[RMDB]
RNA sequence: GGGAACGACUCGAGUAGAGUCGAAAAACACUGCUUGACACAUAUUGUUAGAAGCACCUCGCAUCUGCAAGUUCUCUUAAGCAAAAUACUUGCAUUAGGUCUCAGCUGGGGCUGUGCACCAGGCAGUAGUUGCACAAUUCUUCGGAAUUGUGCAACUAAAAGAAACAACAACAACAAC
Reactivity to DMS in 0.01 (KOAc 150mM, MgCl2 10mM, bicine 150mM(pH8.5), 24C), signal-to-noise 1, nucleotides 027 to 126: a000c080a120c000u010g040c000u000u000g030a210c020a070c050a120u040a030u030u000g060u060u000a140g000a270a080g000c000a010c030c050u040c210g000c050a080u090c090u060g000c020a000a020g010u000u050c070u000c080u000u030a060a170g000c120a000a050a040a020u010a000c060u030u020g000c000a070u010u000a020g000g050u000c100u070c080a220g010c090u020g000g030g000g000c000u000g000u010g010c050a040c010c020a020g040g000c050a000g000u030
Reactivity to 2A3 in 0.01 (KOAc 150mM, MgCl2 10mM, bicine 150mM(pH8.5), 24C), signal-to-noise 4, nucleotides 027 to 126: a000c040a010c010u000g010c010u030u040g050a020c030a000c010a040u110a110u220u190g100u090u050a070g050a140a000g030c010a090c010c000u040c030g040c020a080u050c010u050g000c000a000a020g020u100u030c080u010c000u120u160a130a060g070c000a020a050a020a050u160a050c020u010u010g000c010a000u050u150a040g000g050u030c030u040c090a030g000c010u060g000g010g070g000c040u020g020u050g050c030a040c050c000a000g020g040c000a000g000u040